[RMDB]
RNA sequence: GGGAACGACUCGAGUAGAGUCGAAAAUGAGUCUGCGCUCCACUUCUCAUUUAUAAUCUUAUGAUGAUAUAGCAGGAGAUUGCUAUGUUGCCCGGCAGAGGCUUUGUAUCUGGGCACUAGUCUCAACCAUAGCCGCAUGAUUCGUCAUGCGGCUAUGAAAAGAAACAACAACAACAAC
Reactivity to 2A3 in 0.01 (KOAc 150mM, MgCl2 10mM, bicine 150mM(pH8.5), 24C), signal-to-noise 6, nucleotides 027 to 126: u100g000a010g030u020c030u050g010c020g030c040u030c010c000a050c040u040u020c010u010c010a040u030u140u100a190u090a160a120u030c050u070u190a100u130g060a030u020g060a030u030a010u030a140g000c030a030g030g030a040g030a080u100u130g000c010u010a010u160g060u070u070g070c000c000c000g010g010c050a020g030a040g080g090c030u210u100u090g050u040a080u020c020u030g000g030g000c020a010c010u000a000g030u000c010u010c020a010a060c050
Reactivity to DMS in 0.01 (KOAc 150mM, MgCl2 10mM, bicine 150mM(pH8.5), 24C), signal-to-noise 3, nucleotides 027 to 126: u000g010a010g000u010c050u020g010c060g000c020u000c000c070a150c050u010u000c050u000c010a040u010u010u010a080u020a070a120u010c120u010u010a080u020g010a050u000g000a030u000a030u000a030g020c030a030g000g010a150g000a090u040u000g010c030u010a010u010g000u010u010g020c020c000c010g010g010c100a080g000a070g010g000c050u000u030u020g020u000a050u000c020u020g010g010g000c020a060c080u000a050g010u010c030u000c020a070a110c300
Structure probing data (2A3 and DMS) for a 177-nucleotide construct.
DMS (dimethyl sulfate) methylates the pairing face of unpaired adenines and cytosines.
Values cover nucleotides 27 to 126.
The reactions ran in a buffer of 150 mM KOAc, 10 mM MgCl2 and 150 mM bicine (pH 8.5), at 24 C.